[RMDB]
RNA sequence: GGGAACGACUCGAGUAGAGUCGAAAAAAGGAGUCCACGCCUGCAUGUCCGAGGAAAACAGUUUUCUCAAACACAUUAGUUGAAAAACUGAAGACGCUGCCUAAAAUACAAGCUGAGUUAGAGACAGCCCUUGUAAGACUAGGUAGGUAUUUACAGACACCUAAAUACUCUUCGGAGUAUUUAGGUGAAAAGAAACAACAACAACAAC
Reactivity to 2A3 in 0.01 (KOAc 150mM, MgCl2 10mM, bicine 150mM(pH8.5), 24C), signal-to-noise 3, nucleotides 027 to 156: a000a000g080g000a010g020u000c010c000a030c070g020c020c020u050g010c020a080u100g020u020c020c020g030a030g010g040a030a040a020a070c030a050g010u000u000u030u000c080u010c040a150a180a030c060a010c030a180u160u250a030g040u030u000g020a020a030a010a010a020c000u000g010a040a040g050a020c050g000c220u010g000c000c000u040a070a070a010a020u060a010c030a000a040g000c040u030g060a010g100u130u150a060g040a000g020a130c010a010g000c000c040c060u000u020g010u020a050a030g020a060c040u010a020g040g010u010a010g010g030u040a140u000u140u050a030c040a010g070a010
Reactivity to DMS in 0.01 (KOAc 150mM, MgCl2 10mM, bicine 150mM(pH8.5), 24C), signal-to-noise 1, nucleotides 027 to 156: a080a010g000g010a150g000u010c030c070a100c040g020c000c040u000g020c050a090u000g000u020c040c020g010a090g020g010a070a060a030a300c130a050g000u000u010u000u000c030u000c040a060a090a020c060a190c050a230u000u000a120g000u010u020g010a030a000a020a060a040c000u020g000a060a130g000a060c100g070c000u000g000c000c020u010a020a060a130a250u000a000c030a030a050g020c020u000g000a170g030u010u030a170g000a300g000a100c040a080g000c040c000c000u040u000g000u000a020a060g000a300c190u020a020g020g000u020a040g020g060u000a040u000u010u000a100c060a080g000a300
Chemical mapping of a 207-nucleotide RNA with 2A3 and DMS. For 2A3 the reverse transcriptase was SuperScript II with manganese. Reactivities are given for positions 27 through 156. DMS adducts were read by reverse transcription with MarathonRT. It was measured as part of the RMDB library OK3TST.